Structure probing data (2A3) for a 207-nucleotide construct.
[RMDB]
RNA sequence: GGGAACGACUCGAGUAGAGUCGAAAAGUACGGAAACCAUCCUGGGCAUGCGAAAGGAUGGAAGCAUGCGAAAGGAUGGCCUGAUGACAGCAUGCGAAAGGAUGGAGCUAGAUGCUGCGCCGCUCCGAGCAUGCGAAAGGAUGGGCGGCUAGCAUGCCACCUUCAGCGAUUUCGAUCGCUGAAGGUGAAAAGAAACAACAACAACAAC
Reactivity to 2A3 in 0.01 (KOAc 150mM, MgCl2 10mM, bicine 150mM(pH8.5), 24C), signal-to-noise 1, nucleotides 027 to 156: g060u020a010c080g070g000a000a000a060c000c010a010u000c000c020u140g000g090g060c000a020u010g000c000g070a180a050a120g210g060a030u110g040g030a020a000g000c030a000u030g000c000g160a110a000a020g080g000a090u020g040g040c000c000u000g030a030u090g050a010c010a100g020c000a020u060g010c000g000a100a030a000g060g020a080u130g020g020a010g020c030u050a030g000a110u050g000c010u040g020c020g000c020c020g000c000u010c010c010g010a000g010c030a050u060g070c020g070a160a030a010g070g020a070u150g000g000g000c080g030g000c080u060a000g000c000a000u080g050c000